[RMDB]
RNA sequence: GGGAACGACUCGAGUAGAGUCGAAAAGAUAUGGACGUCUGUGGGUUUACCACAGACAUGUCGAAGAAGGGUCGGAAACGACCCGUAACGACAACAGCUGUGGUAAACCCACAGUACGUCCUAAGUCCUUUUACCAUACCUUCGGGUAUGGUAAAAGAAAAGAAACAACAACAACAAC
Reactivity to DMS in 0.01 (KOAc 150mM, MgCl2 10mM, bicine 150mM(pH8.5), 24C), signal-to-noise 2, nucleotides 027 to 126: g010a170u000a300u020g000g000a000c000g010u000c000u010g000u000g000g020g010u000u000u010a000c020c000a020c010a020g050a060c130a030u000g000u000c000g000a020a060g040a300a300g000g010g020u010c000g000g000a130a110a270c010g020a020c000c000c010g030u010a070a190c000g000a000c000a050a120c300a140g000c000u000g010u000g000g040u000a020a000a030c030c010c000a010c000a000g010u000a040c030g020u000c000c000u010a000a120g000u000c020
This 177-nucleotide RNA was probed chemically with DMS.
DMS adducts were read by reverse transcription with MarathonRT.
Reactivities are given for positions 27 through 126.
Source: RMDB library TTRINS, as collected in RNAgym.
For DMS, 1,351 sequencing reads were counted.